[RMDB]
RNA sequence: GGGAACGACUCGAGUAGAGUCGAAAAAAAAAAGAUAUGGACAUAGCAAUGAUGGGUCAGUGCAAUAAUUGCUUCUCGGAAACGAGAAGCAUAGCACAGACCUUGAGCUAUGUCCUAAGUCAAAAAACUCAUGUAAAUACUUCGGUAUUUACAUGAGAAAAGAAACAACAACAACAAC
Reactivity to DMS in 0.01 (KOAc 150mM, MgCl2 10mM, bicine 150mM(pH8.5), 24C), signal-to-noise 2, nucleotides 027 to 126: a010a080a090a150a070a150g000a030u000a300u000g010g010a030c000a020u000a000g030c000a170a060u010g010a150u000g000g000g010u000c000a110g040u010g000c010a250a080u010a070a080u010u000g010c010u000u000c000u010c000g030g000a060a110a170c000g000a010g000a000a020g020c000a000u000a030g000c020a010c010a080g020a000c000c000u000u000g000a090g030c000u000a000u000g010u000c000c010u000a000a040g010u000c010a020a070a110a040a070a110
Reactivity to 2A3 in 0.01 (KOAc 150mM, MgCl2 10mM, bicine 150mM(pH8.5), 24C), signal-to-noise 2, nucleotides 027 to 126: a000a000a010a000a000a070g060a020u100a040u160g010g020a010c000a000u010a000g020c030a060a300u210g010a030u080g080g000g030u000c010a100g010u010g000c010a080a300u070a200a050u120u040g000c000u010u020c010u000c020g000g050a080a070a060c000g010a010g030a000a000g000c010a000u000a010g000c000a000c000a000g010a010c000c000u000u000g000a010g000c000u010a000u010g000u000c010c000u000a000a000g000u000c000a040a000a070a120a090a080

Source: RMDB library TTRDES, as collected in RNAgym. Chemical mapping of a 177-nucleotide RNA with DMS and 2A3. 2A3 adducts were read by reverse transcription with SuperScript II with manganese. The 2A3 profile rests on 3,204 reads.